[RMDB]
RNA sequence: GGGAACGACUCGAGUAGAGUCGAAAAUUGGCCCAUAUUUCGAUAUGGGCCAAAGUUAACCUUUGUGCACUGUCGAACUACGUCUCAAACCCAUUGGGUUAAGUGACGCGACUGUGCACUCUGGUCUUUAAACUCGGUUUGUUCGCAAACCGAGUAAGUACCAACAAGGAUUCGUCCUUGUUGGUACAAAAGAAACAACAACAACAAC
Reactivity to DMS in 0.01 (KOAc 150mM, MgCl2 10mM, bicine 150mM(pH8.5), 24C), signal-to-noise 1, nucleotides 027 to 156: u030u000g020g010c000c000c020a020u000a020u000u000u010c230g060a090u020a010u000g000g050g050c000c000a000a000a010g030u000u000a090a070c000c020u000u010u000g000u000g010c000a040c000u000g010u000c030g010a110a300c070u000a090c000g000u000c010u000c030a300a040a000c000c000c010a300u020u010g050g060g020u000u000a010a120g000u000g000a030c020g030c000g000a010c020u010g080u000g000c020a000c000u000c040u010g000g000u000c030u000u000u010a080a140a080c000u000c000g010g000u000u000u010g040u000u000c300g000c000a010a010a000c000c000g020a000g030u000a000a090
Reactivity to 2A3 in 0.01 (KOAc 150mM, MgCl2 10mM, bicine 150mM(pH8.5), 24C), signal-to-noise 5, nucleotides 027 to 156: u060u010g020g000c010c010c010a000u000a000u020u140u080c260g080a000u000a000u000g000g000g000c000c000a010a010a000g010u040u230a070a060c000c000u010u020u020g000u000g020c000a010c000u030g000u000c010g020a180a100c140u130a140c300g000u000c010u010c040a110a070a020c000c000c150a300u170u300g010g000g010u080u050a240a170g020u040g050a000c010g000c010g020a000c010u020g000u000g000c000a000c010u000c000u000g000g010u020c030u030u170u120a190a250a020c000u000c000g000g010u000u000u000g030u050u050c110g000c170a000a000a000c000c000g000a000g010u000a000a000

This 207-nucleotide RNA was probed chemically with DMS and 2A3. DMS adducts were read by reverse transcription with MarathonRT. DMS (dimethyl sulfate) methylates the pairing face of unpaired adenines and cytosines. The RNA was probed in 150 mM KOAc, 10 mM MgCl2 and 150 mM bicine (pH 8.5) at 24 C. The DMS profile rests on 3,045 reads.